[RMDB]
RNA sequence: GGGAACGACUCGAGUAGAGUCGAAAAUUAAGUUUGUCGAGGAUCAUUUUUUUGAACUGAAUCAUGCUCUUUUUAAGUGCUUUGAAACCCUCGAUGAAUGUGUCAAUGUGCAAAGAUAAACCAUUGUAACAUCAGACCAAUUCGUUGGUCUGAUGUUAAAAGAAACAACAACAACAAC
Reactivity to 2A3 in 0.01 (KOAc 150mM, MgCl2 10mM, bicine 150mM(pH8.5), 24C), signal-to-noise 3, nucleotides 027 to 126: u120u060a060a000g040u010u000u060g020u000c000g000a000g040g010a070u110c050a070u050u060u040u000u060u050u210g140a120a020c060u120g060a070a060u050c020a010u060g030c010u030c010u000u170u060u000u050a150a020g000u030g010c000u080u020u140g060a080a060a050c000c000c000u000c000g020a000u010g070a020a010u090g010u000g060u060c020a000a030u040g070u030g120c050a010a000a160g140a120u090a080a030a020c010c000a020u000u110g030u000
Reactivity to DMS in 0.01 (KOAc 150mM, MgCl2 10mM, bicine 150mM(pH8.5), 24C), signal-to-noise 1, nucleotides 027 to 126: u000u000a060a120g020u000u000u010g010u000c050g000a020g000g000a190u020c070a010u000u000u040u000u000u010u010g020a020a070c250u000g010a050a200u020c100a010u000g040c080u000c000u010u000u000u030u030a040a020g010u000g000c070u000u050u000g000a050a050a070c150c000c000u000c010g000a010u000g000a000a010u000g010u020g000u000c030a000a020u000g020u000g000c070a030a050a090g010a080u010a070a080a170c070c000a000u020u000g000u000